[RMDB]
About this RNA:
Structure probing data (2A3) for a 207-nucleotide construct. The 2A3 profile rests on 2,510 reads. Source: RMDB library RNAMAK, as collected in RNAgym. 2A3 adducts were read by reverse transcription with SuperScript II with manganese. Conditions: 150 mM KOAc, 10 mM MgCl2 and 150 mM bicine (pH 8.5), 24 C.
RNA sequence: GGGAACGACUCGAGUAGAGUCGAAAAGGGGUCGUCCGUUUGACGCGAAAGACAUGAGCCAUACACUGAAGCCUCCACGGUGUAUCGGCUCAACAGCUUUCGCCGAGGACGACGGAGGCACCCAAAACGUAUAAUGCCGUUCGCGGCAUUAUACGAACUGUACCUAGUCGUUCGCGACUAGGUACAGAAAAGAAACAACAACAACAAC
Reactivity to 2A3 in 0.01 (KOAc 150mM, MgCl2 10mM, bicine 150mM(pH8.5), 24C), signal-to-noise 2, nucleotides 027 to 156: g080g010g030g030u010c000g000u000c000c010g000u100u150u070g010a000c000g000c000g010a000a000a000g040a080c150a300u300g000a000g000c000c020a000u000a010c000a000c000u040g020a110a020g020c000c000u000c000c000a020c030g020g010u000g000u030a010u060c150g010g000c000u000c000a020a010c030a020g000c000u000u010u000c000g000c000c000g000a010g010g000a000c000g000a000c010g000g010a000g000g000c020a030c000c000c000a090a060a000a020c000g010u000a000u000a000a000u000g000c020c010g020u070u070c230g010c020g100g000c000a000u000u000a000u000a000c000g000a010a020